This 177-nucleotide RNA was probed chemically with 2A3.
RNA sequence: GGGAACGACUCGAGUAGAGUCGAAAAGAAACGUGCGGUGGUACAUGUGCGCUACCAGAUAAUUGGGUAUAUCUUUGGCCGGGUGACUGCUUGCCUUCAGCGUGUGGAGGCCUGUGCGUCAUAAAACGCGGGGUACCUCUUUCGGGAGGUACCCCGCAAAAGAAACAACAACAACAAC
Reactivity to 2A3 in 0.01 (KOAc 150mM, MgCl2 10mM, bicine 150mM(pH8.5), 24C), signal-to-noise 1, nucleotides 027 to 126: g130a010a050a030c010g090u100g000c010g050g000u040g080g000u030a010c000a020u130g090u010g000c050g000c090u000a000c060c000a030g000a140u080a010a250u200u000g030g000g000u020a030u020a030u110c030u010u060u200g070g000c040c040g000g060g000u060g000a000c030u030g130c040u060u000g040c000c000u080u020c000a000g050c040g120u300g100u110g110g010a020g050g020c020c000u040g010u060g010c000g010u000c030a000u230a020a110a010a000c090
The reactions ran in a buffer of 150 mM KOAc, 10 mM MgCl2 and 150 mM bicine (pH 8.5), at 24 C.